[RMDB]
RNA sequence: GGGAACGACUCGAGUAGAGUCGAAAAGAUAUGGACGUAGGGAGCUCGAGUGUCGGAAACGACACGAGAGCGAGGAUCUACUGGGUCCUAAGUCAAACGCAACGUGCUGUUCGCAGCACGUUGCGAACAUACAUUGCAAGUUCGCUUGCAAUGUAUGAAAAGAAACAACAACAACAAC
Reactivity to DMS in 0.01 (KOAc 150mM, MgCl2 10mM, bicine 150mM(pH8.5), 24C), signal-to-noise 7, nucleotides 027 to 126: g010a060u000a260u000g010g010a030c020g010u000a010g000g000g010a050g020c000u000c010g000a300g010u000g020u000c000g020g000a080a070a220c000g000a010c000a000c000g010a290g000a010g010c000g000a020g000g010a040u000c010u000a010c020u010g030g010g020u000c000c000u000a050a110g010u000c040a110a120a230c020g010c000a010a020c000g010u000g000c000u000g000u000u010c200g010c000a000g000c000a000c000g000u000u000g010c000g010a010a080
Reactivity to 2A3 in 0.01 (KOAc 150mM, MgCl2 10mM, bicine 150mM(pH8.5), 24C), signal-to-noise 5, nucleotides 027 to 126: g020a010u100a040u180g020g000a010c030g030u000a010g000g000g020a010g000c000u000c010g010a020g010u000g000u000c000g010g030a140a090a030c020g010a000c000a040c010g020a030g000a000g000c000g010a030g000g000a010u010c010u030a020c080u170g300g180g100u000c010c000u020a170a030g090u060c070a120a060a060c040g000c000a000a000c000g000u010g000c020u020g060u110u110c300g020c180a010g000c000a000c000g000u010u000g000c000g000a000a000

Overview
Structure probing data (DMS and 2A3) for a 177-nucleotide construct. Conditions: 150 mM KOAc, 10 mM MgCl2 and 150 mM bicine (pH 8.5), 24 C. 2A3 adducts were read by reverse transcription with SuperScript II with manganese. It was measured as part of the RMDB library TTRDEL.